[RMDB]
Background: This 177-nucleotide RNA was probed chemically with 2A3 and DMS. For 2A3, 1,015 sequencing reads were counted. 2A3 adducts were read by reverse transcription with SuperScript II with manganese.
RNA sequence: GGGAACGACUCGAGUAGAGUCGAAAAGCUGCGAAGAGGGUGGCAGUACAACAGUGGCGUAUUCGAGAAGUGGCCUUCGAGCACCUGCCGCUAGAUCAAGCACUUCUGUCAAAUGGCGUUGCGGAGGCUUAGCACUCGGUUUCGACCGAGUGCUAAGAAAAGAAACAACAACAACAAC
Reactivity to 2A3 in 0.01 (KOAc 150mM, MgCl2 10mM, bicine 150mM(pH8.5), 24C), signal-to-noise 2, nucleotides 027 to 126: g010c000u060g020c040g060a080a070g020a080g050g060g000u030g000g020c000a000g010u090a060c010a130a000c010a160g060u080g030g000c000g000u040a060u030u080c060g030a040g050a210a050g040u060g050g040c000c000u030u070c020g000a010g000c010a020c010c010u040g020c000c000g000c020u000a000g020a080u090c050a030a020g020c000a030c020u060u030c040u030g050u080c050a050a060a090u110g020g040c000g030u060u100g030c040g010g020a010g080g000
Reactivity to DMS in 0.01 (KOAc 150mM, MgCl2 10mM, bicine 150mM(pH8.5), 24C), signal-to-noise 3, nucleotides 027 to 126: g000c050u000g020c050g000a020a090g010a100g000g000g000u010g000g000c050a030g010u000a070c150a140a130c120a050g050u000g000g000c020g020u000a090u010u010c070g000a050g050a120a140g020u000g030g000c030c040u010u000c030g000a040g000c070a070c050c040u020g000c030c030g000c020u000a040g000a040u010c070a060a150g050c090a060c010u000u030c020u000g000u010c050a040a090a130u000g000g000c120g010u000u010g000c050g000g000a030g040g000